This 177-nucleotide RNA was probed chemically with DMS and 2A3. For DMS, 1,482 sequencing reads were counted. Values cover nucleotides 27 to 126.
RNA sequence: GGGAACGACUCGAGUAGAGUCGAAAAGCCUCUCACCACCUCUGCAGGGGCAUCAGCAGCGUCAAAUGUGGGCUCCUCCACAACUUCGCCGAGCAUAACGUUUAAUUUAGAGUCGCGUGAAGGUAUGACGUGAUAUGGUGUUCGCACCAUAUCACGUAAAAGAAACAACAACAACAAC
Reactivity to DMS in 0.01 (KOAc 150mM, MgCl2 10mM, bicine 150mM(pH8.5), 24C), signal-to-noise 2, nucleotides 027 to 126: g010c010c020u000c060u000c070a120c060c100a050c060c060u000c030u010g010c130a040g020g000g000g040c010a050u010c030a050g000c040a100g010c050g000u000c080a060a090a130u010g010u010g010g000g020c070u000c060c020u000c010c010a080c080a100a130c030u000u010c010g010c020c010g010a080g020c070a170u000a020a040c210g010u010u020u020a070a170u010u000u010a080g010a230g010u000c030g030c100g030u000g010a030a040g020g000u010a120u000g010
Reactivity to 2A3 in 0.01 (KOAc 150mM, MgCl2 10mM, bicine 150mM(pH8.5), 24C), signal-to-noise 2, nucleotides 027 to 126: g000c000c000u000c020u030c030a050c070c000a060c020c030u070c060u110g040c060a050g030g010g000g040c020a040u030c040a000g070c000a000g040c010g030u020c030a020a110a170u080g000u000g030g050g000c030u070c010c000u110c000c000a020c010a060a050c020u050u040c000g000c030c020g030a010g040c050a050u070a120a020c050g000u020u090u180a220a210u160u150u000a070g000a040g060u070c040g020c080g110u020g000a020a030g060g040u170a190u150g060
For 2A3 the reverse transcriptase was SuperScript II with manganese. DMS adducts were read by reverse transcription with MarathonRT.